[RMDB]
RNA sequence: GGGAACGACUCGAGUAGAGUCGAAAAGAUAUGGAUGAUGACCCGAGUUUUAGGUUCGAUGAAAUUGAUUAGGGUCGGAAACGACCCUAAUCAAUGGAGAACCUAUCACUCGCAUCAUCCUAAGUCAGACAUAACUAUUCUUCGGAAUAGUUAUGUCAAAAGAAACAACAACAACAAC
Reactivity to 2A3 in 0.01 (KOAc 150mM, MgCl2 10mM, bicine 150mM(pH8.5), 24C), signal-to-noise 2, nucleotides 027 to 126: g040a020u110a050u210g000g000a000u010g000a000u020g070a130c050c090c080g000a020g010u010u010u000u000a010g000g020u010u000c050g080a300u100g030a080a100a020u020u010g000a000u010u020a000g030g000g000u000c020g020g000a060a050a000c010g000a000c000c000c000u000a000a000u000c000a000a000u000g000g000a010g000a000a000c000c000u000a000u000c010a000c000u000c010g000c000a000u000c000a000u000c000c000u010a100a000g060u000c050a020
Reactivity to DMS in 0.01 (KOAc 150mM, MgCl2 10mM, bicine 150mM(pH8.5), 24C), signal-to-noise 5, nucleotides 027 to 126: g010a060u010a300u020g000g020a010u000g010a020u000g000a160c250c250c090g000a020g030u000u000u000u000a000g010g010u000u000c000g010a130u010g000a100a120a010u000u000g000a010u000u000a000g000g000g020u010c000g010g000a080a110a220c000g010a010c000c000c000u000a000a000u000c000a000a000u000g010g000a060g000a010a010c000c000u000a000u000c060a010c010u000c010g000c010a000u000c000a000u000c000c000u000a010a060g020u010c070a190
The data come from the RNA Mapping Database (RMDB), library TTRINS. An RNA of 177 nucleotides, treated with 2A3 and DMS and read out base by base. Reactivities are rounded to 0.1 and cut off at 0 and 3. In probing experiments dimethyl sulfate is read out at A N1 and C N3, which are open when not base-paired.